[RMDB]
The data come from the RNA Mapping Database (RMDB), library M2RFPK. The record gives the reactivity of an RNA of 207 nucleotides to DMS and 2A3.
RNA sequence: GGGAACGACUCGAGUAGAGUCGAAAAACAAGUGGUGGUAGUCCGCCACUCUAAGGGGACGCCUUUAGAAGAAGAGGCUAGGGGGUAUUCCGGUGUGGGAUACUUAGUAAUAUGCAAUGCUAAUUGCUCAAGGAUAGAUGAUUCGUCAUCUAUCCAAACACCUAAUACACUUCGGUGUAUUAGGUGUAAAAGAAACAACAACAACAAC
Reactivity to DMS in 0.01 (KOAc 150mM, MgCl2 10mM, bicine 150mM(pH8.5), 24C), signal-to-noise 1, nucleotides 027 to 156: a090c060a080a120g000u000g020g030u000g000g030u010a050g010u000c010c020g000c010c010a030c010u020c020u000a010a020g010g020g010g020a150c190g000c000c000u000u000u000a070g020a080a140g000a060a060g000a150g010g020c010u000a060g020g010g060g040g000u010a040u000u000c000c010g010g040u000g000u020g020g000g000a020u000a000c010u000u000a120g030u000a100a160u000a180u000g020c070a110a180u000g010c030u000a090a090u000u000g030c010u020c090a120a160g000g000a020u010a000g000a020u000g000a050u000u010c290g000u010c000a020u000c010u000a000u000c000c010a020a030
Reactivity to 2A3 in 0.01 (KOAc 150mM, MgCl2 10mM, bicine 150mM(pH8.5), 24C), signal-to-noise 3, nucleotides 027 to 156: a000c150a150a070g010u010g020g000u020g020g160u020a010g010u000c000c020g020c000c000a000c010u010c000u010a010a010g000g010g000g030a060c130g100c010c020u020u000u010a050g000a100a010g000a020a000g080a080g000g000c010u020a020g050g030g000g000g020u010a030u030u000c070c030g160g050u210g060u220g120g000g000a010u000a020c030u030u050a060g050u080a080a140u070a070u250g010c000a030a020u020g060c050u220a150a060u010u030g010c020u050c150a090a100g010g000a000u000a000g000a000u000g000a000u040u030c110g040u000c070a000u010c000u000a000u000c000c000a000a000
For 2A3 the reverse transcriptase was SuperScript II with manganese.